[RMDB]
RNA sequence: GGGAACGACUCGAGUAGAGUCGAAAAUUUAUUUUAUUCUUCAACAUUAAGGUAACUGCAAACAUAUUGUUGAAGGAAAAUAAAAGGUACUUCUCAGGCUUUCGUCUGCAAUAACUUAAAGAAAAGGACCCAGAAAACGUCCGGUUCGCCGGACGAAGUUGAAUUAUGUGUUCGCACAUAAUUCAACAAAAGAAACAACAACAACAAC
Reactivity to 2A3 in 0.01 (KOAc 150mM, MgCl2 10mM, bicine 150mM(pH8.5), 24C), signal-to-noise 3, nucleotides 027 to 156: u000u010u000a040u000u020u020u030a220u120u010c000u000u000c000a000a000c000a010u040u050a150a170g080g000u070a130a080c110u280g080c120a120a240a010c030a080u090a030u060u050g000u000u000g000a000a010g000g010a000a050a000a000u040a000a010a000a000g050g010u020a050c060u040u040c020u000c030a020g020g000c000u140u170u250c090g020u010c000u020g000c060a040a130u060a080a130c020u080u130a090a070a080g060a020a190a010a010g100g060a020c010c050c080a020g140a050a170a040a030c000g030u040c000c000g040g030u020u030c160g010c030c000g000g000a000c010g010a030a010